[RMDB]
RNA sequence: GGGAACGACUCGAGUAGAGUCGAAAAGAUAUGGACAAGACAACAUCUCCCACGGGAGGCAACAGCUGGUCGAUCGGAAACGAUCGCCAGACAUGCCUUAGUGGGAGAUGUUGUCUUGUCCUAAGUCCAUCAGGUCAAUGUUCGCAUUGACCUGAUGAAAAGAAACAACAACAACAAC
Reactivity to DMS in 0.01 (KOAc 150mM, MgCl2 10mM, bicine 150mM(pH8.5), 24C), signal-to-noise 2, nucleotides 027 to 126: g020a110u010a300u000g000g000a020c000a040a000g000a020c000a000a010c000a010u000c000u010c000c000c000a010c000g010g010g010a010g000g010c020a010a150c300a220g000c010u000g000g000u020c030g020a020u000c000g000g020a130a130a250c020g010a010u000c000g000c000c000a000g020a020c110a180u010g000c000c000u000u000a280g010u000g000g000g010a000g000a000u000g000u000u000g010u000c010u000u000g010u000c000c000u000a000a060g020u010c030